An RNA of 177 nucleotides, treated with 2A3 and DMS and read out base by base. For DMS the reverse transcriptase was MarathonRT. Values cover nucleotides 27 to 126. 2A3 adducts were read by reverse transcription with SuperScript II with manganese. In probing experiments dimethyl sulfate is read out at A N1 and C N3, which are open when not base-paired.

RNA sequence: GGGAACGACUCGAGUAGAGUCGAAAACGCCGCGCCCACGCUGUUCUGCGCCGGCGGCGAUAUCGAGGAGUUCGCCCUGGGCGCGGCGGCGCUGGAACGGCAGGGCGCCGCGCUGCGCGAACUGAUAGCUACCUGCGUGAUUCGUCACGCAGGUAGCAAAAGAAACAACAACAACAAC
Reactivity to 2A3 in 0.01 (KOAc 150mM, MgCl2 10mM, bicine 150mM(pH8.5), 24C), signal-to-noise 1, nucleotides 027 to 126: c000g070c000c000g000c020g000c000c000c020a070c090g000c000u020g030u090u020c010u100g010c000g000c040c000g110g080c000g020g000c020g030a000u040a080u160c120g130a080g070g030a090g100u000u120c030g100c030c060c030u040g050g000g020c030g000c000g030g020c000g000g000c000g040c050u120g000g010a070a010c000g090g000c000a030g010g050g000c000g000c000c010g020c000g020c050u060g000c090g010c010g060a060a020c010u050g130a180u110a050
Reactivity to DMS in 0.01 (KOAc 150mM, MgCl2 10mM, bicine 150mM(pH8.5), 24C), signal-to-noise 1, nucleotides 027 to 126: c030g020c000c250g040c020g010c030c000c010a190c160g040c010u000g000u070u000c070u000g000c000g040c000c070g000g000c080g000g000c000g000a100u010a090u020c050g000a080g010g010a160g020u000u010c100g030c060c030c070u000g000g000g000c010g000c000g000g040c000g000g000c000g020c020u000g010g000a050a060c060g030g030c000a130g000g020g020c030g000c030c050g030c030g000c060u020g000c160g000c070g000a070a100c060u030g000a050u000a110